[RMDB]
RNA sequence: GGGAACGACUCGAGUAGAGUCGAAAACUGGCCACCAUGGUCUACCUGGAUAGGCACUGUGGCGGCACUGCUACGUAGCCGACCUCCCUGGGUCUGGGUGAUUGGUCCCGGGCUGCGAUGGUCGUGACGGACCAUGCCUAUUCGUAGGCAUGGUCCGAAAAGAAACAACAACAACAAC
Reactivity to DMS in 0.01 (KOAc 150mM, MgCl2 10mM, bicine 150mM(pH8.5), 24C), signal-to-noise 1, nucleotides 027 to 126: c050u000g030g000c020c000a050c040c040a030u000g000g020u000c050u020a050c020c000u000g000g000a090u000a030g000g000c170a070c060u000g010u000g000g020c010g000g000c030a080c160u000g040c030u000a030c130g020u010a080g020c020c010g000a060c040c000u000c080c050c090u000g010g010g000u000c010u010g000g000g010u000g000a160u010u020g030g010u010c000c090c000g000g010g000c040u000g040c140g010a060u000g020g000u000c130g000u010g000a140
Reactivity to 2A3 in 0.01 (KOAc 150mM, MgCl2 10mM, bicine 150mM(pH8.5), 24C), signal-to-noise 2, nucleotides 027 to 126: c050u080g090g050c000c010a020c020c010a030u100g020g000u040c120u100a050c040c060u190g190g050a300u280a120g010g000c030a000c060u050g000u030g050g000c000g000g000c050a030c070u120g060c000u030a050c090g120u140a040g020c010c030g020a040c020c000u020c030c000c000u060g130g000g000u060c100u090g030g010g040u180g100a210u130u280g070g080u090c030c010c090g030g060g000c000u070g020c070g100a190u060g010g020u020c070g040u020g030a050